[RMDB]
RNA sequence: GGGAACGACUCGAGUAGAGUCGAAAAGAGACGAAGCAUCUCUUAGCACGUGCGGUAUAACGCGCAACGCACGUGCGAAGCACGUGUAAUCACGUGGCGUAGCGCGUUAUAAGUGAUGCGAAGUCAAGCGCAAAUAUUAGUUCGCUAAUAUUUGCGCAAAAGAAACAACAACAACAAC
Reactivity to DMS in 0.01 (KOAc 150mM, MgCl2 10mM, bicine 150mM(pH8.5), 24C), signal-to-noise 3, nucleotides 027 to 126: g010a140g010a020c000g010a170a300g010c010a000u000c000u000c020u030u040a090g000c050a130c100g010u000g000c000g000g000u030a030u020a070a030c020g010c000g000c020a150a090c150g000c000a030c050g030u000g000c020g040a060a140g020c030a090c070g000u010g000u020a090a200u040c110a050c010g000u000g010g030c000g020u000a140g000c000g010c000g000u000u000a030u000a000a000g000u000g000a040u000g000c030g000a140a300g000u000c010a040a150
Reactivity to 2A3 in 0.01 (KOAc 150mM, MgCl2 10mM, bicine 150mM(pH8.5), 24C), signal-to-noise 5, nucleotides 027 to 126: g190a010g000a010c020g100a080a010g010c000a010u000c000u000c000u050u040a020g010c040a010c060g040u110g030c000g060g000u210a080u030a100a000c010g000c010g000c030a050a050c050g000c020a010c000g000u010g010c000g010a040a000g030c000a010c030g060u080g040u110a090a130u240c050a010c040g000u020g090g000c030g020u060a030g000c000g000c000g000u010u020a020u010a010a000g010u000g010a000u000g010c000g100a040a010g010u000c030a010a020